[RMDB]
RNA sequence: GGGAACGACUCGAGUAGAGUCGAAAAGAAAGAACAACAUGAUGGUAAUACAUAGCGCUGACCAGUCAACAUUGUGCUUUGUGCUCCACAGCCCAGACCUCCAGCAGGCAAAUGGAGAUAUACUCUAGCCCUUCAGUUAAUUCGUUAACUGAAGGGCAAAAGAAACAACAACAACAAC
Reactivity to 2A3 in 0.01 (KOAc 150mM, MgCl2 10mM, bicine 150mM(pH8.5), 24C), signal-to-noise 4, nucleotides 027 to 126: g110a010a080a020g080a050a020c070a010a010c050a100u060g000a020u070g040g030u050a070a030u060a110c040a040u090a040g030c040g000c020u070g030a100c010c030a040g160u140c020a060a060c040a150u070u030g010u030g010c020u030u030u050g040u060g040c020u030c020c010a030c050a010g010c010c010c000a070g030a110c010c010u050c000c000a010g060c040a060g210g000c030a070a020a070u070g010g010a010g000a030u050a040u030a140c020u000c040u030a000
Reactivity to DMS in 0.01 (KOAc 150mM, MgCl2 10mM, bicine 150mM(pH8.5), 24C), signal-to-noise 3, nucleotides 027 to 126: g010a070a110a110g010a110a040c110a040a100c190a060u010g000a130u010g000g000u010a050a080u030a090c170a060u040a120g010c070g020c060u010g000a060c030c030a050g020u030c090a050a180c090a060u010u000g080u020g020c030u020u040u000g010u020g020c020u000c060c030a060c050a150g010c040c000c000a070g030a120c040c020u020c010c100a110g010c030a060g000g000c100a020a060a130u000g010g000a010g000a080u040a090u010a050c050u040c000u000a190
Chemical mapping of a 177-nucleotide RNA with 2A3 and DMS. High DMS reactivity at an A or C suggests that its Watson-Crick edge is free. For 2A3 the reverse transcriptase was SuperScript II with manganese. The 2A3 profile rests on 2,928 reads.